This 177-nucleotide RNA was probed chemically with 2A3 and DMS.
The 2A3 profile rests on 2,418 reads.
Source: RMDB library M2PK90, as collected in RNAgym.
For DMS, 1,476 sequencing reads were counted.
DMS adducts were read by reverse transcription with MarathonRT.

RNA sequence: GGGAACGACUCGAGUAGAGUCGAAAAAGAAAGAGCAACUUAGGAUUUUAGGCUCCCCGGCGUGUCUCGAAGCAUGCCGGGCCAAACCCAUAGGGCUGGCGGUCCCUGUGCGGUCAAAAUUCAAAAACAUUACGUCAGUCUUCGGACUGACGUAAUGAAAAGAAACAACAACAACAAC
Reactivity to 2A3 in 0.01 (KOAc 150mM, MgCl2 10mM, bicine 150mM(pH8.5), 24C), signal-to-noise 1, nucleotides 027 to 126: a000g100a030a060a000g000a000g000c010a000a050c020u040u020a030g000g010a060u030u000u010u030a020g000g000c000u020c010c020c010c000g000g000c010g010u010g040u020c060u080c300g060a060a010g000c020a000u010g010c000c000g000g000g010c000c000a000a000a000c000c000c000a000u010a000g020g010g000c030u040g080g070c050g060g060u110c000c020c000u000g000u000g020c110g000g000u000c010a000a000a020a010u040u020c000a030a000a000a070a080
Reactivity to DMS in 0.01 (KOAc 150mM, MgCl2 10mM, bicine 150mM(pH8.5), 24C), signal-to-noise 2, nucleotides 027 to 126: a040g020a040a040a070g010a010g010c000a020a030c110u000u000a010g000g000a020u000u000u000u000a140g000g000c000u010c000c020c000c000g020g000c000g000u000g020u010c040u000c270g030a180a260g000c000a010u000g010c010c000g000g000g010c010c030a020a200a050c010c010c000a020u000a020g040g000g010c040u020g000g020c090g020g000u010c000c010c010u000g020u010g000c110g010g000u010c110a020a000a010a010u000u000c010a080a100a080a100a130